[RMDB]
RNA sequence: GGGAACGACUCGAGUAGAGUCGAAAAUGCUGGCAACGGUUUGUUACCUGGCGGUGGGGCCGCUUUUCGCUACGCCGCGUACAGCUACCGUUUCCUUUGAAGUGGGGAUUGCGCCGCUGACGGGUGAGUAUGCAAUCAUGUUCGCAUGAUUGCAUACAAAAGAAACAACAACAACAAC
Reactivity to 2A3 in 0.01 (KOAc 150mM, MgCl2 10mM, bicine 150mM(pH8.5), 24C), signal-to-noise 2, nucleotides 027 to 126: u070g010c030u010g040g010c070a090a050c100g000g090u120u230u140g040u040u130a060c020c030u020g070g010c000g040g000u050g030g020g040g010c060c040g050c090u110u080u040u150c020g000c010u040a060c030g020c020c020g000c000g010u050a050c010a000g000c000u020a050c000c000g020u010u020u020c000c000u070u040u200g130a100a050g020u060g040g000g010g040a040u010u200g000c040g010c000c000g000c050u060g030a030c020g040g010g020u030g020a010
Reactivity to DMS in 0.01 (KOAc 150mM, MgCl2 10mM, bicine 150mM(pH8.5), 24C), signal-to-noise 5, nucleotides 027 to 126: u000g020c040u010g010g020c140a070a080c060g010g010u000u010u010g010u010u000a080c070c070u000g020g020c030g000g010u000g010g000g020g020c030c160g020c170u000u000u010u000c130g010c030u000a080c030g010c010c020g010c030g010u000a070c060a050g010c030u010a080c040c020g010u000u000u000c010c020u000u010u000g010a110a070g030u000g000g010g000g000a070u000u000g010c080g000c020c040g010c020u000g010a180c140g020g000g000u000g010a180
This 177-nucleotide RNA was probed chemically with 2A3 and DMS. For 2A3, 2,225 sequencing reads were counted. For DMS the reverse transcriptase was MarathonRT. It was measured as part of the RMDB library OK2TST.